[RMDB]
RNA sequence: GGGAACGACUCGAGUAGAGUCGAAAAAGGCAUUAUGAGGUAUAUUUCGCGACUCAUCGGCAGAUGUAAAAUGCCAGUUAAAUAUAACUGCAAAAAAUACAAAUUCUUACGCAUUAGCUGCCUAAAAAACAGCCUGCGUGAUCUUCACAAGAUUGUUGUUAAUCGUAUUGUUCGCAAUACGAUUAACAAAAGAAACAACAACAACAAC
Reactivity to 2A3 in 0.01 (KOAc 150mM, MgCl2 10mM, bicine 150mM(pH8.5), 24C), signal-to-noise 4, nucleotides 027 to 156: a000g080g000c010a070u080u090a070u160g030a020g010g070u030a070u010a030u150u140u100c080g000c030g040a050c020u030c060a030u020c050g040g000c020a020g040a040u080g040u160a010a050a040a060u040g010c020c000a000g010u000u040a050a200a070u190a040u050a120a040c010u020g000c010a040a010a010a050a000a090u180a040c080a020a190a070u080u010c010u010u050a000c000g000c000a010u150u080a010g000c010u010g000c000c020u010a060a070a010a000a000a000c000a000g000c030c010u000g000c010g000u000g010a010u020c030u120u080c060a030c010a130a040g030a060u000u110g060u050u010